The data come from the RNA Mapping Database (RMDB), library TTRINS. An RNA of 177 nucleotides, treated with DMS and read out base by base. The RNA was probed in 150 mM KOAc, 10 mM MgCl2 and 150 mM bicine (pH 8.5) at 24 C.
RNA sequence: GGGAACGACUCGAGUAGAGUCGAAAAGAUAUGGAGACUGCGUCCCACGUACUGAGCGAUAAGACCGUAUCGGAAACGAUAUAGGUCUUUUGACGCUCUAGUACGUGGGACGCAGUCUCCUAAGUCACCUUAAACGAGAGUUCGCUCUCGUUUAAGGAAAAGAAACAACAACAACAAC
Reactivity to DMS in 0.01 (KOAc 150mM, MgCl2 10mM, bicine 150mM(pH8.5), 24C), signal-to-noise 1, nucleotides 027 to 126: g000a100u000a300u000g000g000a000g040a010c020u000g010c000g020u000c000c000c000a000c030g050u000a000c000u000g020a010g000c000g010a100u000a030a030g010a020c000c000g000u010a000u000c000g000g020a210a090a280c010g010a020u000a010u000a130g090g000u000c000u000u000u000u000g010a230c160g010c010u010c000u010a000g010u010a000c000g050u000g020g000g000a000c010g000c010a000g040u000c010u010c000c020u020a010a060g000u010c050a270